Structure probing data (2A3 and DMS) for a 177-nucleotide construct. Conditions: 150 mM KOAc, 10 mM MgCl2 and 150 mM bicine (pH 8.5), 24 C. For 2A3 the reverse transcriptase was SuperScript II with manganese. The data come from the RNA Mapping Database (RMDB), library RFMREP.
[RMDB]
RNA sequence: GGGAACGACUCGAGUAGAGUCGAAAAUCGCUAAUUCGUUAGCGACUUGGCUUGUUUUAAGUUGCCUGCGAUCUCUUAAUGACUCAGGCAGCUAAAGCAAGUCUGAUGUGUGUCGAUUCGUCGACACGAUUACACAUAUGUUCGCAUAUGUGUAAUCAAAAGAAACAACAACAACAAC
Reactivity to 2A3 in 0.01 (KOAc 150mM, MgCl2 10mM, bicine 150mM(pH8.5), 24C), signal-to-noise 9, nucleotides 027 to 126: u020c000g000c000u000a020a020u080u070c180g070u050u010a010g000c000g010a020c030u080u090g010g000c000u000u000g040u050u040u000u010a110a060g000u000u000g000c010c000u010g040c040g160a300u010c030u000c000u060u290a260a100u300g000a000c000u000c000a000g000g000c000a000g000c000u000a000a000a000g000c000a000a000g000u000c010u010g040a100u120g150u030g000u000g000u010c000g010a030u020u040c190g060u010c000g070a000c000a000c030
Reactivity to DMS in 0.01 (KOAc 150mM, MgCl2 10mM, bicine 150mM(pH8.5), 24C), signal-to-noise 9, nucleotides 027 to 126: u000c000g010c000u000a000a020u000u010c210g020u000u000a000g010c000g010a020c150u010u000g010g010c000u000u000g010u010u000u000u000a040a080g020u000u000g010c000c000u000g010c130g000a120u000c020u000c300u010u010a110a100u010g000a030c020u000c000a010g000g010c000a010g010c000u000a010a010a020g000c010a010a010g010u000c000u010g010a080u010g020u000g010u000g010u000c000g000a030u000u010c210g010u000c000g010a010c000a010c010